RNA sequence: GGGAACGACUCGAGUAGAGUCGAAAAAGAGGAGGCUGGAUUUUGCGAUCUUUAAGCAGAUGGCAGGUUCACCCCGUACGGUGCGGAAGUUCGCGCUUCCGUGAAACGCGAAAAUCGGACGGUGGCUAAGACCAAUAACAGUUCGCUGUUAUUGGAAGCUAGCUUUGAGGUUCGCCUCAAAGCUAGCAAAAGAAACAACAACAACAAC
Reactivity to 2A3 in 0.01 (KOAc 150mM, MgCl2 10mM, bicine 150mM(pH8.5), 24C), signal-to-noise 1, nucleotides 027 to 156: a000g090a040g020g010a040g000g000c030u010g000g120a080u000u030u060u170g000c040g000a020u050c010u070u120u090a150a110g030c030a040g050a030u020g020g000c000a000g000g070u150u120c030a010c010c020c030c000g000u030a010c020g000g000u050g020c000g000g040a010a000g010u050u190c050g040c030g020c080u010u000c050c000g030u020g030a090a110a010c190g020c020g110a060a010a000a030u060c000g000g040a000c050g000g080u120g030g030c000u050a070a120g020a100c000c010a000a000u000a000a000c000a000g050u050u110c210g020c110u000g000u000u000a000u020u000g000g000a000a000
This 207-nucleotide RNA was probed chemically with 2A3. For 2A3 the reverse transcriptase was SuperScript II with manganese.